RNA sequence: GGGAACGACUCGAGUAGAGUCGAAAAGGUGGCUCGACGCAGCAGCGAAAAGAGAGCACUCACGAGUCACCGAUUUAGCAUGUUCGUCCUUUUCGGGCCCCGGGCAUUAUUUUGGACGUUCAUGCGAGGGAUGGUGAUGGUUCGCCAUUACCAUCCCAAAAGAAACAACAACAACAAC
Reactivity to DMS in 0.01 (KOAc 150mM, MgCl2 10mM, bicine 150mM(pH8.5), 24C), signal-to-noise 4, nucleotides 027 to 126: g010g030u000g000g000c020u000c010g040a300c060g020c100a120g050c100a110g010c020g000a090a080a150a120g000a090g000a250g000c110a210c020u000c030a190c010g010a020g010u000c000a000c000c010g000a040u030u020u030a120g000c010a000u010g020u000u000c000g010u000c000c010u020u000u040u010c110g020g000g000c020c000c020c040g000g010g020c140a050u010u020a050u000u010u020u000g000g010a010c000g000u000u000c000a000u000g010c000g010a090
Reactivity to 2A3 in 0.01 (KOAc 150mM, MgCl2 10mM, bicine 150mM(pH8.5), 24C), signal-to-noise 9, nucleotides 027 to 126: g010g000u000g000g010c000u030c010g210a300c090g070c090a060g000c010a050g020c030g130a100a050a160a040g200a030g010a020g020c010a020c020u010c000a020c010g000a000g000u000c000a000c000c000g000a000u020u020u080a020g000c000a000u000g000u000u000c000g000u010c010c000u030u050u060u190c060g060g020g000c010c020c030c030g040g060g000c040a070u080u070a110u060u240u100u080g010g000a000c000g000u000u000c000a000u000g000c000g000a100